Annotation: Structure probing data (DMS and 2A3) for a 177-nucleotide construct. It was measured as part of the RMDB library OK2TRN. For 2A3 the reverse transcriptase was SuperScript II with manganese. The RNA was probed in 150 mM KOAc, 10 mM MgCl2 and 150 mM bicine (pH 8.5) at 24 C. The DMS profile rests on 5,364 reads. As a SHAPE reagent, 2A3 marks flexible, mostly unpaired nucleotides at the ribose 2'-OH.
RNA sequence: GGGAACGACUCGAGUAGAGUCGAAAAUCGGGCAGAGAAACUAGCCAGGCUGGUGCCUGCGUCUGUGAAAUGGGGAGGAGGGGCCUGGCCCACUUCCCGGGCCCUUCUCCCGGGAUCUUGGGGUAGACGUGAAAAUAUCAUUCGUGAUAUUUUCACGAAAAGAAACAACAACAACAAC
Reactivity to DMS in 0.01 (KOAc 150mM, MgCl2 10mM, bicine 150mM(pH8.5), 24C), signal-to-noise 4, nucleotides 027 to 126: u000c120g000g000g000c080a120g010a150g000a160a120a080c040u000a040g020c020c020a020g000g010c020u010g020g020u010g010c020c000u000g010c190g020u000c020u000g010u000g010a080a090a110u000g010g020g000g000a030g000g010a030g010g010g010g020c010c010u000g000g010c150c060c150a040c150u010u000c170c010c010g000g000g000c030c010c010u000u000c020u000c000c000c000g000g000g000a050u000c100u000u000g000g000g000g010u000a100g010a210
Reactivity to 2A3 in 0.01 (KOAc 150mM, MgCl2 10mM, bicine 150mM(pH8.5), 24C), signal-to-noise 2, nucleotides 027 to 126: u110c030g020g000g060c030a020g030a060g030a140a190a020c030u070a040g000c010c070a000g010g000c040u170g170g200u300g060c000c000u040g030c030g050u100c050u040g190u040g060a090a100a180u160g030g020g010g010a040g030g000a030g010g020g070g070c000c000u010g000g030c020c000c000a060c040u130u000c040c000c000g020g020g010c010c080c000u040u030c000u030c000c010c010g020g010g000a040u070c000u040u080g020g010g040g000u070a060g040a160